[RMDB]
RNA sequence: GGGAACGACUCGAGUAGAGUCGAAAAAAGUUGCACCAGGUACGGAUACCAGACGUUGCCAAACAGGGUGACAUGAGGAUCACCCAUGUACUGUCCCUUGGCAGCCGUACCUGGAGCUGGUGAAAAACAUGACUGUUAAGUUCGCUUAACAGUCAUGAAAAGAAACAACAACAACAAC
Reactivity to 2A3 in 0.01 (KOAc 150mM, MgCl2 10mM, bicine 150mM(pH8.5), 24C), signal-to-noise 5, nucleotides 027 to 126: a000a010g190u100u060g010c010a010c000c000a010g000g000u010a000c010g000g030a050u030a120c020c000a020g040a070c060g090u110u060g040c040c020a070a080a020c030a060g010g010g000u010g020a010c040a080u280g140a150g120g070a110u040c010a070c010c000c000a010u030g020u000a050c050u110g030u040c010c010c000u010u010g010g000c000a010g020c000c000g000u000a010c000c000u000g000g000a000g010c000u020g020g070u150g090a100a070a010a010a010
Reactivity to DMS in 0.01 (KOAc 150mM, MgCl2 10mM, bicine 150mM(pH8.5), 24C), signal-to-noise 6, nucleotides 027 to 126: a070a060g010u010u000g020c040a120c000c000a010g000g010u000a010c010g010g010a120u010a100c100c080a070g000a070c130g000u010u000g010c040c030a020a040a030c050a050g000g000g010u000g000a020c020a120u010g010a150g030g000a220u000c030a020c000c000c000a030u000g020u000a040c150u000g000u000c010c030c030u000u010g010g000c010a130g010c010c010g010u000a000c010c000u000g000g000a010g000c000u000g000g010u000g010a060a060a080a060a140